Structure probing data (DMS and 2A3) for a 177-nucleotide construct.
For 2A3 the reverse transcriptase was SuperScript II with manganese.
Conditions: 150 mM KOAc, 10 mM MgCl2 and 150 mM bicine (pH 8.5), 24 C.
Reactivities are given for positions 27 through 126.
Source: RMDB library 15KREP, as collected in RNAgym.
DMS adducts were read by reverse transcription with MarathonRT.
DMS (dimethyl sulfate) methylates the pairing face of unpaired adenines and cytosines.
RNA sequence: GGGAACGACUCGAGUAGAGUCGAAAAAGAUGACCAAGGGCAUCAUUUAGACUCCUAUUUUGUCGUUAAGAGGCAUACUAUGGAGAAUUAUGAACUAGAGAAGCACUGUUACGACUUGUUACGUGACGAUGAACUUGUACUUCGGUACAAGUUCAUCAAAAGAAACAACAACAACAAC
Reactivity to DMS in 0.01 (KOAc 150mM, MgCl2 10mM, bicine 150mM(pH8.5), 24C), signal-to-noise 2, nucleotides 027 to 126: a110g010a090u000g000a150c010c060a090a170g010g000g000c010a040u020c020a070u020u000u000a130g010a210c000u000c060c020u000a050u000u000u000u000g000u000c000g000u000u010a130a100g000a140g000g000c020a050u000a080c090u010a070u010g010g000a040g000a060a090u030u000a050u000g000a080a080c090u000a060g000a040g000a110a080g000c050a050c000u000g000u000u000a050c020g000a030c090u010u000g000u000u010a120c070g000u000g000a080c090
Reactivity to 2A3 in 0.01 (KOAc 150mM, MgCl2 10mM, bicine 150mM(pH8.5), 24C), signal-to-noise 1, nucleotides 027 to 126: a000g030a010u020g030a020c020c030a090a130g090g050g000c010a010u010c000a010u150u000u000a020g070a010c010u000c010c010u020a060u080u050u020u010g020u000c040g030u050u030a090a060g070a130g020g050c000a000u060a110c050u040a060u130g040g010a050g020a020a000u120u010a090u100g030a040a030c020u030a120g000a000g010a110a000g000c010a000c120u020g000u100u020a010c030g000a020c030u020u100g070u090u110a020c020g060u010g010a020c040